[RMDB]
RNA sequence: GGGAACGACUCGAGUAGAGUCGAAAAAUCAUCUGAAGAUCAGCUAUUAGAAGAGAAAGAUCAGUUAAGUCCUUUGGACCUGAUCAGCUUGAUACAAGAACUACUUAUUUCAACUUCUUUGGCUUAAAAAAGGCCACAGAGUUCGCUCUGUGGCCAAGUUCCCUUUUAACUUCGGUUAAAAGGGAACAAAAGAAACAACAACAACAAC
Reactivity to 2A3 in 0.01 (KOAc 150mM, MgCl2 10mM, bicine 150mM(pH8.5), 24C), signal-to-noise 1, nucleotides 027 to 156: a000u000c000a020u060c100u150g110a110a040g090a210u090c010a000g000c000u040a070u180u050a220g020a080a000g000a020g040a070a070a000g010a000u000c000a000g000u010u210a130a020g000u030c000c000u060u120u300g000g000a000c000c000u000g000a000u010c000a000g000c030u060u140g040a100u100a160c040a080a000g020a220a050c090u140a040c010u220u110a130u010u100u040c000a030a030c020u010u000c020u000u060u000g070g010c000u050u040a000a000a040a000a000a080g000g000c030c010a000c000a010g020a000g000u130u070c030g060c020u000c000u000g000u000g000g030c020c000a000a010